Structure probing data (DMS and 2A3) for a 177-nucleotide construct. Conditions: 150 mM KOAc, 10 mM MgCl2 and 150 mM bicine (pH 8.5), 24 C.
[RMDB]
RNA sequence: GGGAACGACUCGAGUAGAGUCGAAAACAACGGUCGCCGACGAUAAAAUCGUAUCGAUUGAAAUCAGCGGCUCGGGGCCAUGGGAGGAUACCGGAGAUCGAUAUGACGGCAGCAGUGCCUUGGCGCUUAUCAGGGGUUUUUUCGAAAACCCCUGAUAAAAAGAAACAACAACAACAAC
Reactivity to DMS in 0.01 (KOAc 150mM, MgCl2 10mM, bicine 150mM(pH8.5), 24C), signal-to-noise 3, nucleotides 027 to 126: c050a120a210c080g010g000u010c000g030c020c000g030a050c060g020a120u020a060a050a050a130u010c000g000u000a100u020c080g000a010u000u000g000a090a150a100u020c020a090g030c020g010g020c040u000c060g010g000g030g030c050c060a060u030g000g000g020a110g000g000a180u040a030c020c020g000g000a160g000a030u010c020g000a090u010a030u010g000a130c080g000g010c030a040g000c120a080g020u000g000c000c010u010u030g020g020c040g000c170u020
Reactivity to 2A3 in 0.01 (KOAc 150mM, MgCl2 10mM, bicine 150mM(pH8.5), 24C), signal-to-noise 3, nucleotides 027 to 126: c040a000a050c020g020g050u080c020g000c010c000g030a060c030g030a020u030a120a160a040a040u050c030g000u060a050u100c030g030a010u000u150g060a200a180a060u130c060a020g060c030g060g000c020u030c020g030g000g030g000c000c020a070u080g050g030g000a060g070g000a060u100a200c000c010g010g000a080g000a020u040c060g000a050u000a030u090g070a030c020g030g010c020a020g000c020a020g060u040g050c000c000u040u040g060g000c030g000c050u010
The DMS profile rests on 3,452 reads.